[RMDB]
RNA sequence: GGGAACGACUCGAGUAGAGUCGAAAAAGCAUCACUGGGGUGGGACUUUUGAAGAUGCUUCCAACCAGCGAAACUCCUUGGGUAGUGGGGCUCUUAUUAAUAAGCCUUGUAAAACUGAAGUCAUAGCGACUUAUGGUCAGUUCGCUGACCAUAAGUCAAAAGAAACAACAACAACAAC
Reactivity to DMS in 0.01 (KOAc 150mM, MgCl2 10mM, bicine 150mM(pH8.5), 24C), signal-to-noise 1, nucleotides 027 to 126: a080g000c040a060u010c010a090c050u010g000g010g000g090u030g000g000g000a070c070u000u010u000u000g000a140a090g000a070u000g000c100u000u000c060c040a130a110c060c090a030g020c070g000a070a080a100c110u000c040c020u000u000g010g040g020u000a140g010u010g000g000g010g020c040u000c070u020u000a190u010u010a060a100u000a030a120g000c020c010u000u000g040u000a040a040a080a120c030u010g000a040a020g010u000c100a060u000a040g000c150
Notes: An RNA of 177 nucleotides, treated with DMS and read out base by base. Source: RMDB library OK2TRN, as collected in RNAgym. Conditions: 150 mM KOAc, 10 mM MgCl2 and 150 mM bicine (pH 8.5), 24 C. The DMS profile rests on 954 reads.